Structure probing data (DMS and 2A3) for a 177-nucleotide construct. The DMS profile rests on 1,262 reads. Source: RMDB library TTRDES, as collected in RNAgym. Conditions: 150 mM KOAc, 10 mM MgCl2 and 150 mM bicine (pH 8.5), 24 C.
[RMDB]
RNA sequence: GGGAACGACUCGAGUAGAGUCGAAAAGAUAUGGAAGUCUGCCAGCUCGACGAAGUACCUCGGAAACGAGGUACAGAGAGCCAGCAGAGCUUCCUAAGUCAAAGAAUUUGGCUUCGGCCAAAUUCAAGUACUUGAGCAUGUUCGCAUGCUCAAGUACAAAAGAAACAACAACAACAAC
Reactivity to DMS in 0.01 (KOAc 150mM, MgCl2 10mM, bicine 150mM(pH8.5), 24C), signal-to-noise 2, nucleotides 027 to 126: g000a070u000a300u000g010g010a040a000g030u000c000u000g000c000c020a210g010c010u020c000g000a300c300g000a150a140g010u010a010c000c000u000c020g020g000a060a080a280c020g040a020g060g000u010a000c000a000g060a140g000a000g010c020c010a110g020c000a030g010a080g000c020u000u000c000c000u000a020a080g000u000c060a130a150a180g000a000a020u000u000u000g000g010c000u000u000c260g020g010c010c000a000a020a010u000u000c000a090a150
Reactivity to 2A3 in 0.01 (KOAc 150mM, MgCl2 10mM, bicine 150mM(pH8.5), 24C), signal-to-noise 1, nucleotides 027 to 126: g030a050u090a020u240g000g000a000a010g040u000c010u000g010c000c020a040g040c010u050c020g300a300c040g010a220a000g010u000a000c000c000u010c000g000g050a040a120a040c000g060a020g000g000u000a000c000a020g000a000g010a000g000c000c000a000g000c010a000g050a050g060c000u000u070c000c010u020a100a030g000u030c040a070a050a290g000a010a020u010u000u020g000g030c060u030u160c300g120g020c000c040a000a000a000u000u010c000a010a020